[RMDB]
RNA sequence: GGGAACGACUCGAGUAGAGUCGAAAACUUAAAAAGUGGCACCGCAUUUAGCCCCCCUUCGUACCGAUUCUGUUUUCGUCUCAAGCUCUUCAUUACUACAGCGCAAGUCUACCAUUACCACACCCACGACACUUCAAAACUUCGGUUUUGAAGUGUCAAAAGAAACAACAACAACAAC
Reactivity to 2A3 in 0.01 (KOAc 150mM, MgCl2 10mM, bicine 150mM(pH8.5), 24C), signal-to-noise 4, nucleotides 027 to 126: c020u070u100a070a050a060a040a040g060u040g010g010c010a030c030c010g010c070a100u080u070u140a030g000c000c000c010c000c010c000u020u040c030g040u030a040c010c010g050a100u100u050c010u040g050u040u010u020u010c030g040u000c020u010c030a050a070g000c000u000c000u110u060c030a070u050u120a040c020u030a030c030a030g000c010g000c050a020a020g020u010c010u030a050c000c000a020u030u050a040c020c020a020c010a020c020c000c010a040c030
Reactivity to DMS in 0.01 (KOAc 150mM, MgCl2 10mM, bicine 150mM(pH8.5), 24C), signal-to-noise 1, nucleotides 027 to 126: c040u000u060a010a120a010a070a040g020u020g010g010c040a000c030c040g050c020a000u030u000u010a140g000c060c000c000c010c020c000u020u020c020g000u010a120c000c080g060a190u070u010c100u010g030u020u020u000u020c020g000u000c050u000c040a030a100g020c010u000c050u020u020c080a120u020u020a060c040u000a020c140a140g000c020g000c060a040a060g020u020c070u020a100c080c000a110u010u000a080c020c020a020c120a070c000c000c020a050c150
This 177-nucleotide RNA was probed chemically with 2A3 and DMS. Conditions: 150 mM KOAc, 10 mM MgCl2 and 150 mM bicine (pH 8.5), 24 C. Source: RMDB library RFM100, as collected in RNAgym.